[RMDB]
RNA sequence: GGGAACGACUCGAGUAGAGUCGAAAAGACAGAAUCAAUCUCGGUAUCGUUGACGGCGGCCUGCCGCAGGAUCUCUUGCACGUCGCCCGAGUUGUCCUGGUAGGCAAUCUCGGUCAUAAACUGCUCGCUGUAUGCAUUACUUCGGUAAUGCAUACAGAAAAGAAACAACAACAACAAC
Reactivity to DMS in 0.01 (KOAc 150mM, MgCl2 10mM, bicine 150mM(pH8.5), 24C), signal-to-noise 5, nucleotides 027 to 126: g010a070c070a100g000a130a200u010c070a090a100u000c030u000c010g000g010u000a080u000c060g000u000u000g000a140c070g010g010c040g020g010c080c060u000g020c070c070g020c080a030g010g010a100u010c070u000c030u000u010g010c030a070c100g000u000c080g010c140c010c010g010a010g000u000u010g000u010c000c010u000g020g010u010a130g000g010c010a030a020u010c010u000c010g020g000u010c050a080u000a040a080a090c050u010g010c030u010c090g010
Reactivity to 2A3 in 0.01 (KOAc 150mM, MgCl2 10mM, bicine 150mM(pH8.5), 24C), signal-to-noise 4, nucleotides 027 to 126: g040a020c040a020g140a120a090u140c040a040a060u060c030u000c060g040g010u070a070u130c040g030u040u100g090a090c020g030g030c010g020g060c010c060u060g020c060c040g000c020a020g030g030a070u030c070u020c010u120u120g030c020a020c090g100u070c040g000c000c000c020g000a000g000u020u030g030u040c030c030u100g210g100u220a070g030g000c010a020a080u090c010u010c020g030g010u010c010a020u080a130a110a040c030u050g020c020u020c050g060